Record summary
Source: RMDB library RFM100, as collected in RNAgym. Structure probing data (DMS and 2A3) for a 177-nucleotide construct. 2A3 adducts were read by reverse transcription with SuperScript II with manganese. DMS adducts were read by reverse transcription with MarathonRT.
RNA sequence: GGGAACGACUCGAGUAGAGUCGAAAAUUCCUGAGCUGGGUGGGGCCGCAGAGACCAGAGAGAAGCGACUGUUUACUAAAAACACAGGUCCGUGCGAAGUCGUAAGACGAUGUAUACGGACUGACGCCUCGUGCGAUGAAUUCGUUCAUCGCACGAGAAAAGAAACAACAACAACAAC
Reactivity to DMS in 0.01 (KOAc 150mM, MgCl2 10mM, bicine 150mM(pH8.5), 24C), signal-to-noise 1, nucleotides 027 to 126: u010u010c010c000u000g000a150g010c090u020g000g000g070u030g010g020g000g010c000c060g000c040a000g020a020g020a030c080c030a050g000a220g010a060g000a090a040g010c070g030a110c070u000g000u050u000u000a110c070u000a000a090a070a110a090c070a110c190a220g000g000u020c020c020g010u000g000c040g020a120a250g000u010c000g000u020a110a050g000a080c000g000a030u020g010u000a100u030a030c000g020g000a020c020u000g000a070c090g000c070
Reactivity to 2A3 in 0.01 (KOAc 150mM, MgCl2 10mM, bicine 150mM(pH8.5), 24C), signal-to-noise 2, nucleotides 027 to 126: u000u000c000c000u020g040a010g030c020u020g010g000g020u040g020g000g030g000c040c000g040c030a040g020a010g020a070c020c090a020g040a010g000a000g030a130a010g040c020g070a030c030u020g060u080u040u010a110c040u080a010a000a130a020a000c140a010c020a030g040g110u010c000c000g000u000g000c040g060a110a000g010u010c000g010u160a090a060g030a000c020g000a000u130g030u050a110u040a040c010g000g000a010c000u000g010a000c020g020c000